[RMDB]
RNA sequence: GGGAACGACUCGAGUAGAGUCGAAAAUGGUGCGGAGCCGUACAUGAUAAACAUGUAUGGCAAGGUCUGUCGACCUGGCGGCUGUUCUCCAGUCUAUAGAACGGCCUCGAGGCAGAAGGUUCCGCACACUUCCGUGGCUCUUCGGGGCCAUGGAAGUAAAAGAAACAACAACAACAAC
Reactivity to DMS in 0.01 (KOAc 150mM, MgCl2 10mM, bicine 150mM(pH8.5), 24C), signal-to-noise 9, nucleotides 027 to 126: u020g020g020u000g010c000g000g000a070g010c000c000g020u000a000c000a010u000g000a200u060a120a140a230c010a010u000g000u000a000u000g000g020c010a050a030g000g010u000c010u000g000u010c030g000a150c070c060u020g010g010c280g010g000c000u000g000u000u000c000u000c190c170a140g000u050c180u020a100u030a020g010a020a020c000g000g010c000c000u000c020g010a110g010g000c080a050g000a050a040g000g010u020u000c010c000g000c000a010c010
Reactivity to 2A3 in 0.01 (KOAc 150mM, MgCl2 10mM, bicine 150mM(pH8.5), 24C), signal-to-noise 9, nucleotides 027 to 126: u170g070g000u000g000c000g010g000a000g000c000c000g010u010a000c000a000u030g110a160u160a150a140a040c000a000u000g000u010a000u010g010g000c010a000a010g060g020u000c010u010g050u020c050g060a230c030c050u050g100g020c070g020g000c010u020g010u020u010c020u030c050c030a070g130u040c040u100a160u070a140g010a010a000c010g010g010c000c000u010c020g050a030g000g000c010a000g010a030a020g060g020u060u010c000c000g000c000a000c000